Chemical mapping of a 177-nucleotide RNA with 2A3 and DMS. The 2A3 profile rests on 13,812 reads. DMS adducts were read by reverse transcription with MarathonRT. 2A3 adducts were read by reverse transcription with SuperScript II with manganese. Reactivities are given for positions 27 through 126. The RNA was probed in 150 mM KOAc, 10 mM MgCl2 and 150 mM bicine (pH 8.5) at 24 C.
[RMDB]
RNA sequence: GGGAACGACUCGAGUAGAGUCGAAAAUCUGUUGACAAGUAAUCGUAAAGUCGAAGUCGGACUACGGUUGCGGCAACAGAAGUCAGAUAGCCUCAAGUCCGACUUGGACUAUUGUUAGAUCUGAUCACUACAGGUUUGUAUUCGUACAGACCUGUAGAAAAGAAACAACAACAACAAC
Reactivity to 2A3 in 0.01 (KOAc 150mM, MgCl2 10mM, bicine 150mM(pH8.5), 24C), signal-to-noise 4, nucleotides 027 to 126: u000c010u010g020u050u040g040a020c020a100a030g060u060a120a090u080c060g020u050a130a070a000g000u010c090g080a030a010g020u030c010g010g000a000c010u020a010c040g000g010u010u010g020c000g020g020c000a050a020c020a160g150a100a000g000u000c010a010g010a090u050a010g010c010c000u030c080a050a000g000u000c000c000g000a020c000u000u030g030g000a000c000u020a030u020u040g030u030u030a030g000a050u000c020u010g020a020u060c030a010
Reactivity to DMS in 0.01 (KOAc 150mM, MgCl2 10mM, bicine 150mM(pH8.5), 24C), signal-to-noise 9, nucleotides 027 to 126: u000c020u000g010u000u000g010a060c070a070a080g010u010a070a060u000c100g010u000a050a140a060g010u000c000g000a040a050g010u000c050g010g000a020c000u000a170c300g000g010u000u000g020c050g000g000c010a060a110c200a110g000a100a090g010u000c020a060g020a060u000a030g010c010c010u000c140a080a060g000u000c010c010g000a040c050u000u000g010g010a020c010u000a030u000u000g010u000u000a060g000a140u000c040u000g000a080u010c180a170